Chemical mapping of a 170-nucleotide RNA with 2A3 and DMS. Values cover nucleotides 27 to 129. 2A3 adducts were read by reverse transcription with SuperScript II with manganese. Reactivities are rounded to 0.1 and cut off at 0 and 3. For DMS, 107,426 sequencing reads were counted.
RNA sequence: GGGAACGACUCGAGUAGAGUCGAAAACUUUGCCAUCCGAGGGGACUGCGUCCUCCUUACGGAUGCCCAGGUCGGACCGCGAGGAGGUGGAGAUCCCAUGCCGACCCGAAGAGGAAAGGAGGACACGUAAGACAUUAGUUCGCUAAUGUCAAAAGAAACAACAACAACAAC
Reactivity to 2A3 in 0.01 (KOAc 150mM, MgCl2 10mM, bicine 150mM(pH8.5), 24C), signal-to-noise 9, nucleotides 027 to 129: c020u080u070u170g030c010c000a020u000c010c010g010a020g020g020g000g010a020c030u120g050c120g040u020c000c010u060c010c010u050u090a040c030g060g010a050u060g010c010c010c000a040g010g040u060c020g020g030a080c030c020g020c050g040a070g020g010a020g010g020u050g020g010a080g010a060u040c010c010c020a030u090g030c010c010g030a030c000c000c020g070a070a040g030a030g040g000a040a010a000g020g010a010g010g000a010c020a000c090g070u080a130a030
Reactivity to DMS in 0.01 (KOAc 150mM, MgCl2 10mM, bicine 150mM(pH8.5), 24C), signal-to-noise 9, nucleotides 027 to 129: c060u030u020u040g030c090c030a050u000c020c010g020a130g000g010g010g000a040c070u020g000c150g020u020c010c010u040c000c000u010u040a090c040g010g020a060u030g000c070c050c030a090g030g000u020c090g040g020a110c050c040g050c070g000a060g000g030a040g000g000u040g010g010a080g030a090u050c050c020c020a040u050g030c040c010g000a080c060c030c050g010a070a040g000a020g000g030a020a020a020g020g020a030g000g030a040c090a060c080g010u020a090a100